RNA sequence: GGGAACGACUCGAGUAGAGUCGAAAAGAAAGAAUAGGCCAAGGGGCUUGGGUGCUUUGCGGUAAGAGGAGCAUCCUCAGGGUACAGGGAGUACCUUCGUCGUUACGAGCCAGGCUGGACGAUAUAAUCACCCGUAAGUUUUCGAACUUACGGGUGAAAAAGAAACAACAACAACAAC
Reactivity to 2A3 in 0.01 (KOAc 150mM, MgCl2 10mM, bicine 150mM(pH8.5), 24C), signal-to-noise 3, nucleotides 027 to 126: g100a020a070a000g090a040a100u110a120g030g020c000c020a050a070g110g090g010g050c000u010u010g010g000g000u030g030c010u060u000u080g120c120g170g090u150a070a040g020a010g030g000a000g010c020a040u040c000c010u030c010a050g020g000g000u030a040c040a090g160g020g100a140g080u010a000c000c000u010u050c050g060u000c020g020u030u070a050c120g000a010g030c000c010a040g000g030c020u040g020g030a010c070g010a020u000a020u050a110a130
Reactivity to DMS in 0.01 (KOAc 150mM, MgCl2 10mM, bicine 150mM(pH8.5), 24C), signal-to-noise 3, nucleotides 027 to 126: g010a130a070a130g000a150a100u010a100g010g020c000c020a110a120g000g020g010g000c030u000u000g000g010g000u000g000c020u010u000u070g000c060g040g000u050a080a130g000a150g010g000a050g040c110a060u010c010c000u010c270a030g010g000g000u000a020c020a190g000g000g030a170g030u000a000c010c020u000u000c060g020u000c190g020u000u020a070c070g000a050g000c000c030a070g000g000c030u000g000g010a060c080g010a110u030a060u030a090a120